An RNA of 207 nucleotides, treated with 2A3 and read out base by base.
The reactions ran in a buffer of 150 mM KOAc, 10 mM MgCl2 and 150 mM bicine (pH 8.5), at 24 C.
Source: RMDB library OK3TST, as collected in RNAgym.
The 2A3 profile rests on 523 reads.
High 2A3 reactivity points to a flexible backbone, as in loops and unpaired stretches.
RNA sequence: GGGAACGACUCGAGUAGAGUCGAAAAAGAUGUUCUUGUAACUUUGACAGUAUAUUACAGUGAGAAUAGAUUUGCAAGUUAGCUGACUUUAGUAGAGGACAACUUUGUUCAAAUUAAUCAGUAAUAUUUACUGUGUUAUGCUGUAAAAUACUACAAAGUCCACUAGUCAGUUCGCUGACUAGUGGACAAAAGAAACAACAACAACAAC
Reactivity to 2A3 in 0.01 (KOAc 150mM, MgCl2 10mM, bicine 150mM(pH8.5), 24C), signal-to-noise 2, nucleotides 027 to 156: a000g120a080u080g000u050u040c010u050u030g080u030a100a100c010u120u000u070g050a020c010a000g030u000a000u000a000u060u070a020c000a010g010u020g000a130g120a090a120u050a070g040a040u020u060u110g020c030a030a030g020u030u040a080g040c100u070g090a140c030u180u130u070a020g000u040a020g040a050g120g000a090c020a030a040c020u080u140u120g000u120u110c010a010a040a140u040u020a050a040u080c030a000g050u040a000a150u000a080u190u260u040a010c000u000g000u000g030u010u030a070u130g000c000u000g000u000a000a010a070a040u020a020c000u000a030c070a000a030a020